[RMDB]
RNA sequence: GGGAACGACUCGAGUAGAGUCGAAAACUAUGGUGAGACCCUAUCUAGUAUAGCAAUCCACCAAGCAGGUGACUUCACACAAUUCAGGUUCUCAUAGAAAAUGCGCCCUGACUUGACAGGUAUGGUCAAUCCCGCAGUACUUCGGUACUGCGGGAUUAAAAGAAACAACAACAACAAC
Reactivity to 2A3 in 0.01 (KOAc 150mM, MgCl2 10mM, bicine 150mM(pH8.5), 24C), signal-to-noise 1, nucleotides 027 to 126: c000u010a000u080g000g000u000g000a230g010a010c030c010c000u020a020u000c060u070a070g130u090a150u000a080g050c000a000a090u040c010c010a040c000c000a090a100g040c040a010g050g120u050g040a030c020u030u020c050a050c030a020c000a000a110u000u000c000a000g000g020u030u160c000u000c000a010u060a090g140a000a160a010a040u100g000c000g070c020c000c000u040g000a020c010u030u050g000a040c020a080g010g040u150a110u080g040g000u040c040
Reactivity to DMS in 0.01 (KOAc 150mM, MgCl2 10mM, bicine 150mM(pH8.5), 24C), signal-to-noise 1, nucleotides 027 to 126: c100u000a040u060g000g000u000g000a050g000a170c180c300c000u000a000u030c030u050a100g020u000a000u000a000g000c080a120a060u000c060c000a000c010c000a030a080g000c160a110g000g020u000g000a050c030u000u000c100a000c010a290c000a180a000u000u000c000a010g000g040u000u030c000u000c010a040u010a020g050a120a000a080a100u040g020c090g000c300c020c000u000g000a000c000u030u000g000a180c000a030g010g010u000a020u000g030g010u020c120